RNA sequence: GGGAACGACUCGAGUAGAGUCGAAAAGACUAUCAUGCAUGCAGUCUAGCAUGACUAGCUAGAGCGAUCGACGUACUGCUAGCAUCGAUCAGUACCGUACCACAUGACUAGGUCGAUCCAGCGUACCUGCUGCGUAGCCAUUCGUGGCUACGCAGCAAAAAGAAACAACAACAACAAC
Reactivity to 2A3 in 0.01 (KOAc 150mM, MgCl2 10mM, bicine 150mM(pH8.5), 24C), signal-to-noise 2, nucleotides 027 to 126: g000a010c030u010a030u030c030a030u080g050c010a010u060g010c020a030g000u000c010u030a010g010c010a040u150g150a150c050u050a040g000c000u020a020g000a000g060c030g080a050u050c050g070a080c060g090u130a000c020u020g000c020u050a050g000c020a050u030c080g020a030u020c070a000g000u020a080c030c040g070u080a140c080c000a060c020a130u210g040a100c060u030a030g020g000u020c010g020a030u000c000c040a010g010c000g120u070a070c030c030
Reactivity to DMS in 0.01 (KOAc 150mM, MgCl2 10mM, bicine 150mM(pH8.5), 24C), signal-to-noise 2, nucleotides 027 to 126: g030a140c030u000a060u030c000a000u000g020c020a180u010g030c010a050g000u000c050u000a070g020c000a070u000g040a120c200u000a110g000c010u000a050g020a060g000c070g000a050u000c050g000a100c110g050u000a070c010u000g010c030u000a300g000c110a050u000c100g000a010u000c090a020g010u000a140c020c110g000u020a090c080c090a130c130a160u000g000a030c100u010a080g000g040u000c030g000a020u000c020c100a080g000c040g050u030a010c130c130